This 177-nucleotide RNA was probed chemically with 2A3 and DMS.
[RMDB]
RNA sequence: GGGAACGACUCGAGUAGAGUCGAAAAACACAUAGGUACGAUCCAUACGGCCUAGCGCGACGAUCGUACGGCCAGCUCAGAUCGUACGCGGCGCGAUAUGUGGCCCUGUGCGUACUAUAGCGCAUGCUCGAAGAGUCUAGUUCGCUAGACUCUUCGAAAAAGAAACAACAACAACAAC
Reactivity to 2A3 in 0.01 (KOAc 150mM, MgCl2 10mM, bicine 150mM(pH8.5), 24C), signal-to-noise 5, nucleotides 027 to 126: a000c040a000c010a030u050a050g030g000u200a120c010g010a040u030c110c030a040u100a190c020g020g000c010c020u040a070g050c010g000c010g070a110c030g030a170u170c010g010u020a000c000g000g000c010c020a090g030c090u090c140a060g010a140u020c010g010u010a000c010g000c010g030g000c010g000c010g040a060u030a040u180g060u030g030g020c000c000c020u060g010u000g000c010g000u040a080c120u250a150u160a090g010c020g020c020a010u070g020c020
Reactivity to DMS in 0.01 (KOAc 150mM, MgCl2 10mM, bicine 150mM(pH8.5), 24C), signal-to-noise 7, nucleotides 027 to 126: a120c020a020c040a080u000a030g010g010u000a030c010g000a080u000c170c160a130u010a090c130g000g000c020c010u010a160g020c010g010c020g000a050c100g000a090u000c020g000u000a020c080g020g000c030c040a120g010c220u010c230a110g010a030u000c010g020u000a010c020g010c040g010g000c010g010c000g000a130u020a050u000g000u000g000g010c000c000c030u010g000u000g000c020g010u000a060c150u000a100u000a130g010c010g000c020a030u000g010c160
Conditions: 150 mM KOAc, 10 mM MgCl2 and 150 mM bicine (pH 8.5), 24 C. The data come from the RNA Mapping Database (RMDB), library OK2TRN. For 2A3, 12,626 sequencing reads were counted.